[RMDB]
RNA sequence: GGGAACGACUCGAGUAGAGUCGAAAAUUGUGGUCAAGACCUUGCCGUAGUAUCCAAGGUUGUCAAGGUUCCUAUUGACUUAACAAUGAUUGAGUUUAUGUUAUGGUGUAAGGAUGGACAGGGGAAACGUACAUCUCAUGUUCGCAUGAGAUGUACGAAAAGAAACAACAACAACAAC
Reactivity to DMS in 0.01 (KOAc 150mM, MgCl2 10mM, bicine 150mM(pH8.5), 24C), signal-to-noise 7, nucleotides 027 to 126: u000u000g030u010g010g010u000c030a070a070g000a050c010c010u000u000g010c070c050g010u010a090g000u000a090u000c120c100a050a070g020g010u000u010g010u010c060a040a040g000g000u000u000c080c110u000a140u000u010g010a030c010u000u010a090a030c020a030a060u000g000a130u000u000g010a090g010u000u000u010a040u010g010u000u000a050u010g010g020u000g000u010a050a070g010g010a080u000g000g010a040c080a050g000g010g010g000a060a070a120
Reactivity to 2A3 in 0.01 (KOAc 150mM, MgCl2 10mM, bicine 150mM(pH8.5), 24C), signal-to-noise 2, nucleotides 027 to 126: u010u020g010u020g020g000u020c020a070a000g040a030c000c000u000u010g000c030c020g130u110a030g080u040a090u070c100c030a050a010g080g000u080u090g030u040c010a010a030g020g000u030u110c000c020u030a110u020u060g010a010c000u060u070a060a000c010a030a070u060g040a200u080u110g030a080g130u090u070u100a110u130g130u070u080a090u140g030g020u070g030u080a060a040g010g010a050u070g020g020a020c020a030g010g000g000g020a040a050a000
An RNA of 177 nucleotides, treated with DMS and 2A3 and read out base by base. Values cover nucleotides 27 to 126. 2A3 adducts were read by reverse transcription with SuperScript II with manganese. The DMS profile rests on 10,870 reads. It was measured as part of the RMDB library M2PK90. For 2A3, 4,496 sequencing reads were counted.